RNA sequence: GGGAACGACUCGAGUAGAGUCGAAAAGAUGUUCUUUGGUGUGGGUACAUCGGGUGGCACAACAAUUACUAUGACGCAUCAUGGUGGUUGUGAACUCGUGGCUUGAUGCGUCAAGUUAUGAGUGUUCUAUGUUACUGUACCCACAGUGAUAUAGAAACGAGUCGACUAUGUUCGCAUAGUCGAUUCGAAAAGAAACAACAACAACAAC
Reactivity to 2A3 in 0.01 (KOAc 150mM, MgCl2 10mM, bicine 150mM(pH8.5), 24C), signal-to-noise 9, nucleotides 027 to 156: g090a060u110g030u080u030c050u060u070u120g120g040u040g020u010g010g010g010u020a020c010a050u070c080g050g050g080u160g030g020c030a010c010a080a040c010a060a210u080u040a030c010u040a110u170g010a010c020g000c040a030u010c000a010u070g050g030u060g030g030u090u090g080u070g100a060a030c040u030c090g050u040g090g020c020u010u020g000a000u000g010c020g020u010c000a000a000g000u010u020a010u020g030a020g020u030g020u090u090c040u070a070u060g080u050u070a060c050u030g010u010a010c000c000c000a000c000a000g000u010g010a020u030a010u020a140g090a020a050a030
Reactivity to DMS in 0.01 (KOAc 150mM, MgCl2 10mM, bicine 150mM(pH8.5), 24C), signal-to-noise 6, nucleotides 027 to 156: g010a110u000g020u000u000c030u000u000u010g030g020u010g040u000g020g020g020u010a040c010a070u010c050g030g030g030u010g050g020c050a060c040a010a080c040a080a070u000u000a020c020u000a090u010g030a080c130g020c100a080u000c010a050u000g010g020u000g020g020u000u010g030u000g000a080a070c040u000c070g040u000g010g020c020u000u030g010a020u010g020c140g030u000c010a010a020g020u000u000a010u010g000a130g020u000g000u000u000c060u000a030u000g020u010u000a050c040u000g020u000a090c050c050c060a160c000a010g010u000g010a080u010a090u000a050g000a060a090a280